[RMDB]
This 177-nucleotide RNA was probed chemically with 2A3 and DMS. It was measured as part of the RMDB library RFM100. Conditions: 150 mM KOAc, 10 mM MgCl2 and 150 mM bicine (pH 8.5), 24 C. For 2A3, 1,621 sequencing reads were counted.
RNA sequence: GGGAACGACUCGAGUAGAGUCGAAAAAGUCUUUUGGUAAGAUGCUGAUAAUGAGUAGGGGAGAUGAAAGUUAAUCGUUCCCUGUCUCUCCGCUGGAAAGAAUUGCAAAACAAAGAAAAUCCCUGUAAACAUUCUUCCCAUUCGUGGGAAGAAUGUUAAAAGAAACAACAACAACAAC
Reactivity to 2A3 in 0.01 (KOAc 150mM, MgCl2 10mM, bicine 150mM(pH8.5), 24C), signal-to-noise 4, nucleotides 027 to 126: a000g020u000c020u000u190u050u030g030g050u090a090a120g050a160u100g010c010u010g020a050u050a280a080u150g070a080g020u200a300g000g010g020g010a010g020a000u040g090a130a050a030g130u180u300a180a140u130c040g000u000u000c000c010c000u000g000u000c010u000c000u010c000c000g000c000u010g080g100a050a070a050g060a110a180u110u030g000c000a000a080a070a020c040a020a060a000g010a000a070a000a050u020c000c000c010u030g080u070a010
Reactivity to DMS in 0.01 (KOAc 150mM, MgCl2 10mM, bicine 150mM(pH8.5), 24C), signal-to-noise 2, nucleotides 027 to 126: a030g000u000c000u000u020u010u000g020g010u010a130a110g010a140u010g000c040u030g000a090u030a040a070u070g000a040g040u010a100g020g000g030g020a020g010a030u010g010a080a120a090g020u020u040a110a240u020c000g000u000u000c000c000c000u000g000u020c000u000c010u000c000c000g000c030u000g020g000a110a090a110g000a050a080u000u020g020c000a020a030a100a040c020a010a040a030g010a030a040a040a140u000c010c000c000u000g000u010a120